[RMDB]
RNA sequence: GGGAACGACUCGAGUAGAGUCGAAAAUGGCCUUCGGCUUGAUGAUCAGGUCCUCGCCGCCACCCAGCAGGAUGUGCAGGGCCGAGCCGGGGAAGUUGGUGGCCGAGCGGAUCGUCUCCUGGAGGAAGUUCUUGGACUUGCCGUUGUCCGAGGUGCCCCAUAGGUAUAUAUUCGUAUAUACCUAUGGAAAAGAAACAACAACAACAAC
Reactivity to DMS in 0.01 (KOAc 150mM, MgCl2 10mM, bicine 150mM(pH8.5), 24C), signal-to-noise 2, nucleotides 027 to 156: u000g020g040c030c000u000u000c030g010g040c030u000u010g020a110u000g010a060u000c020a060g040g010u000c030c000u010c060g020c020c000g000c000c010a120c020c030c010a130g030c070a180g050g010a070u010g010u000g010c100a130g010g030g040c010c050g010a070g050c020c020g010g000g020g010a040a150g030u010u000g030g030u010g030g030c050c050g020a070g000c020g020g020a050u000c020g010u010c020u010c050c000u000g000g020a090g000g010a070a090g010u000u000c030u000u010g020g010a040c010u010u000g000c070c080g030u000u000g010u000c010c000g020a090g040g010u000g000c060c090
Reactivity to 2A3 in 0.01 (KOAc 150mM, MgCl2 10mM, bicine 150mM(pH8.5), 24C), signal-to-noise 5, nucleotides 027 to 156: u110g070g030c020c000u030u020c020g040g030c110u040u110g020a020u020g000a010u070c020a050g090g150u160c070c020u000c030g010c000c000g020c000c000a050c010c010c010a010g010c020a020g040g080a080u120g080u180g130c070a050g050g160g000c010c020g010a030g000c030c010g000g000g010g000a080a060g170u140u090g020g000u000g060g000c230c110g010a010g020c040g020g010a010u010c010g000u000c020u020c020c030u070g010g010a020g020g030a050a050g050u070u020c010u030u040g010g000a010c010u030u120g120c110c040g130u090u080g010u010c000c000g000a010g010g030u110g030c010c000